[RMDB]
RNA sequence: GGGAACGACUCGAGUAGAGUCGAAAAUUGACUCUUACAAAGCGAUAGUUGUAGGAGUAUUAGUCUUACUAUCGCUCUAUUGUACAUAAGACUAGGAGUUGCUAUUGCGUACAAUAGGUGGCAACUGGCUCAGCAGGCUAUUCGUAGUCUGUUGAGCAAAAGAAACAACAACAACAAC
Reactivity to 2A3 in 0.01 (KOAc 150mM, MgCl2 10mM, bicine 150mM(pH8.5), 24C), signal-to-noise 9, nucleotides 027 to 126: u070u100g020a000c000u000c000u000u010a000c000a010a010a010g000c000g000a000u000a000g010u000u010g000u000a000g000g010a000g010u010a010u020u090a000g010u000c030u050u130a070c010u010a000u000c000g000c000u000c000u000a010u000u010g000u000a000c010a040u180a190a110g080a100c040u050a050g150g050a060g080u020u010g000c000u030a040u130u220g060c040g000u010a000c000a000a010u000a010g000g000u040g050g000c000a010a010c020u020g080
Reactivity to DMS in 0.01 (KOAc 150mM, MgCl2 10mM, bicine 150mM(pH8.5), 24C), signal-to-noise 9, nucleotides 027 to 126: u010u010g010a040c000u000c000u000u000a010c000a010a020a240g000c000g000a010u000a000g020u000u000g010u000a010g000g000a020g010u000a050u000u000a090g010u010c110u000u000a130c000u000a000u000c000g010c000u000c010u000a010u000u000g000u000a010c020a150u010a100a110g010a120c140u000a110g010g010a090g010u000u000g010c020u000a130u010u010g010c130g000u000a010c010a010a010u000a010g010g000u000g010g010c040a020a030c030u000g010